[RMDB]
RNA sequence: GGGAACGACUCGAGUAGAGUCGAAAAGAUAUGGAUCGGCACGGGAGAGGUUAUCGGAAACGAUAAUACCUCGACGAUCGUGGCGAUCCUAAGUCAAAACAGCAGACGCGUUCGCGCGUCUGCUGAAGUAUAGACAUGUGUUCGCACAUGUCUAUACAAAAGAAACAACAACAACAAC
Reactivity to 2A3 in 0.01 (KOAc 150mM, MgCl2 10mM, bicine 150mM(pH8.5), 24C), signal-to-noise 4, nucleotides 027 to 126: g010a000u020a000u090g000g000a010u010c010g060g130c050a000c010g020g030g030a100g000a000g000g050u000u010a000u000c010g010g010a020a000a010c010g020a000u020a020a050u200a110c020c000u030c010g050a040c030g010a020u020c000g000u010g070g120c010g000a000u000c000c000u000a010a000g000u010c010a000a020a150a240c010a000g000c010a000g010a010c020g100c010g050u120u210c300g020c020g000c000g140u020c000u000g000c000u000g000a000a000
Reactivity to DMS in 0.01 (KOAc 150mM, MgCl2 10mM, bicine 150mM(pH8.5), 24C), signal-to-noise 4, nucleotides 027 to 126: g010a020u000a140u010g000g010a020u000c000g000g010c010a010c000g010g020g000a050g020a020g020g000u000u000a000u000c000g020g000a040a030a070c010g020a010u010a000a090u000a130c030c000u000c000g010a070c300g000a080u000c000g010u010g000g000c000g010a010u010c000c000u000a000a060g010u000c010a130a110a120a300c010a010g020c000a010g000a000c000g000c000g010u000u000c290g040c010g030c000g000u000c010u000g000c000u000g000a000a090